RNA sequence: GGGAACGACUCGAGUAGAGUCGAAAAGAAUGAUGAAGUAGUCGUAGAAGUUCUUCUAGAGCUUGCCAUCAUAAUUUGUGAAAUAACGAAAAUUGCAUCAAGCAGAUUUCCAUCAUAUCAAUCAAAACCUAAUAGCGGUAUUCGUACCGCUAUUAGGAAAAGAAACAACAACAACAAC
Reactivity to 2A3 in 0.01 (KOAc 150mM, MgCl2 10mM, bicine 150mM(pH8.5), 24C), signal-to-noise 9, nucleotides 027 to 126: g050a010a030u030g030a010u020g020a080a020g050u150a030g060u060c050g040u060a020g010a080a020g050u160u100c050u080u030c050u120a040g010a010g080c000u020u040g040c070c040a040u030c010a020u050a140a130u100u070u070g060u020g070a090a100a080u150a090a060c050g060a040a030a020a040u090u060g030c060a110u180c040a300a050g000c010a020g020a080u060u040u000c030c010a010u040c020a020u130a050u140c030a110a010u030c020a010a040a060a110
Reactivity to DMS in 0.01 (KOAc 150mM, MgCl2 10mM, bicine 150mM(pH8.5), 24C), signal-to-noise 4, nucleotides 027 to 126: g000a140a030u000g000a040u000g000a070a070g020u020a050g030u020c030g020u000a070g010a000a040g030u010u020c080u010u020c080u020a030g030a080g000c020u000u000g000c070c100a050u010c020a050u010a080a100u010u000u020g000u000g000a050a080a080u040a080a100c050g000a010a030a050a100u020u000g020c060a070u010c060a040a110g020c010a040g020a100u000u010u000c020c050a060u000c060a090u040a120u030c110a040a120u010c120a030a030a110a110
Chemical mapping of a 177-nucleotide RNA with 2A3 and DMS.